The data come from the RNA Mapping Database (RMDB), library ARCHII. The record gives the reactivity of an RNA of 207 nucleotides to 2A3 and DMS. For 2A3 the reverse transcriptase was SuperScript II with manganese. For DMS, 2,393 sequencing reads were counted.

RNA sequence: GGGAACGACUCGAGUAGAGUCGAAAAUGGUUUCGACGGGGAGUACAAAGUUUAGGAUGCAUGUCGUGCCUGAAUGAUGCACGUAAAUCUUUAUUUCAAUUUGUUAUAGUUGCAAACGACGAUAACUACGCUCUAGCGGCUUAAUCCCGCUAGCGCACCUAAGAAUCCACUUCGGUGGAUUCUUAGGAAAAGAAACAACAACAACAAC
Reactivity to 2A3 in 0.01 (KOAc 150mM, MgCl2 10mM, bicine 150mM(pH8.5), 24C), signal-to-noise 3, nucleotides 027 to 156: u050g000g010u010u060u060c010g030a010c020g010g010g020g020a030g020u020a020c040a020a130a040g010u050u100u110a050g020g040a070u110g030c090a040u100g030u160c030g000u020g020c010c000u000g010a010a010u040g000a010u180g000c000a000c020g080u150a020a030a010u010c010u000u070u080a060u010u060u030c040a060a120u060u060u090g050u020u060a060u030a170g010u010u010g040c080a120a030a000c060g050a000c010g020a020u020a090a030c070u090a060c130g000c000u000c000u000a000g010c000g010g000c010u070u120a050a040u130c020c000c000g010c010u000a000g000c000g000c000a020
Reactivity to DMS in 0.01 (KOAc 150mM, MgCl2 10mM, bicine 150mM(pH8.5), 24C), signal-to-noise 1, nucleotides 027 to 156: u000g030g010u010u000u000c020g010a060c010g040g010g040g030a240g040u000a060c020a010a030a150g030u000u000u010a120g010g000a130u000g010c040a100u000g000u000c000g100u000g000c020c020u010g010a030a020u000g010a170u000g010c000a020c040g000u000a020a040a010u000c030u000u000u020a030u000u030u000c020a080a180u000u010u000g010u000u000a160u000a060g040u000u020g010c010a020a130a190c040g000a120c080g000a130u000a060a140c020u000a030c030g000c000u000c010u010a000g080c030g070g030c070u010u010a110a120u030c210c000c000g030c020u000a010g040c000g020c010a070